[RMDB]
RNA sequence: GGGAACGACUCGAGUAGAGUCGAAAAACAGUCUAUCUACUAUAUACUGAUCAAUAUUAUCUCUAUGAAUCCUAAAAUAAUCAUACAGAACAUCUACAGGAUCACAAAUUGGUUCAAGGAGAAAUCUAUCAAAUAUUUUCCUGUCAACAACUGGUUCCAUUCUUUACAUUUUCGAAUGUAAAGAAUGAAAAGAAACAACAACAACAAC
Reactivity to DMS in 0.01 (KOAc 150mM, MgCl2 10mM, bicine 150mM(pH8.5), 24C), signal-to-noise 1, nucleotides 027 to 156: a100c010a070g020u000c020u010a100u000c040u020a070c070u020a120u000a090u000a090c040u010g000a110u000c020a110a060u000a150u010u020a080u010c010u010c010u010a080u020g020a150a070u000c040c010u000a070a110a140a100u020a100a100u000c000a070u010a240c050a070g000a000a100c070a040u010c040u000a170c030a080g030g020a060u000c010a100c050a010a130a170u000u000g000g030u000u000c070a060a160g000g030a090g000a020a040a060u000c070u020a060u020c010a040a070a090u000a110u000u000u000u000c000c000u000g000u000c010a000a030c040a040a060c110u010g010g030u000u020c020
Reactivity to 2A3 in 0.01 (KOAc 150mM, MgCl2 10mM, bicine 150mM(pH8.5), 24C), signal-to-noise 4, nucleotides 027 to 156: a000c000a010g020u010c050u060a150u010c020u080a110c050u010a080u020a030u020a180c060u040g020a050u090c040a010a120u040a070u230u140a090u060c030u000c010u050a080u100g060a060a040u070c040c050u100a060a080a070a080u180a060a110u080c010a030u070a150c050a050g170a180a010c010a090u040c030u140a080c030a080g090g000a010u040c040a030c020a130a160a080u070u090g020g040u050u050c030a080a060g050g000a030g070a060a050a010u030c040u090a060u090c060a110a120a040u060a070u110u040u020u040c020c010u050g080u120c040a070a070c000a030a060c080u070g070g000u070u010c010
Structure probing data (DMS and 2A3) for a 207-nucleotide construct. The 2A3 profile rests on 1,871 reads. For DMS, 1,666 sequencing reads were counted. Reactivities are rounded to 0.1 and cut off at 0 and 3. 2A3 adducts were read by reverse transcription with SuperScript II with manganese.